[RMDB]
About this RNA: An RNA of 177 nucleotides, treated with DMS and 2A3 and read out base by base. For DMS, 4,355 sequencing reads were counted. The 2A3 profile rests on 8,996 reads. Source: RMDB library TTRDES, as collected in RNAgym. The RNA was probed in 150 mM KOAc, 10 mM MgCl2 and 150 mM bicine (pH 8.5) at 24 C.
RNA sequence: GGGAACGACUCGAGUAGAGUCGAAAAGAUAUGGAGGUGGCAAGCUUUUGACGCUCUAGGGUCGGAAACGACCCGAAGAGCGAUAAGCUUGCACCUCCUAAGUCAAAGCACAUGUUCGCAUGUGCAAGGUGAGAAUAUGGUUCGCCAUAUUCUCACCAAAAGAAACAACAACAACAAC
Reactivity to DMS in 0.01 (KOAc 150mM, MgCl2 10mM, bicine 150mM(pH8.5), 24C), signal-to-noise 4, nucleotides 027 to 126: g000a040u000a300u000g000g010a020g000g030u000g010g040c020a000a010g020c010u010u000u010u020g010a260c100g020c010u000c000u000a300g000g010g000u020c000g000g000a090a080a200c000g010a020c000c000c000g000a020a100g000a000g010c010g020a040u000a000a020g000c000u000u010g000c020a010c000c000u000c000c000u000a000a030g020u000c030a100a160a200g000c000a010c030a020u000g010u010u010c260g020c010a010u000g020u000g010c010a020a040
Reactivity to 2A3 in 0.01 (KOAc 150mM, MgCl2 10mM, bicine 150mM(pH8.5), 24C), signal-to-noise 3, nucleotides 027 to 126: g020a020u060a010u190g020g000a000g040g020u170g160g220c000a010a000g000c030u060u150u170u220g240a160c070g000c000u010c010u030a040g010g010g000u000c020g000g030a030a060a080c000g000a000c000c000c010g000a020a000g000a000g000c000g010a000u010a010a000g010c010u000u000g010c000a000c010c000u010c000c010u000a000a000g000u000c030a030a000a090g000c000a000c010a020u030g060u130u180c300g030c150a000u010g000u000g000c030a010a040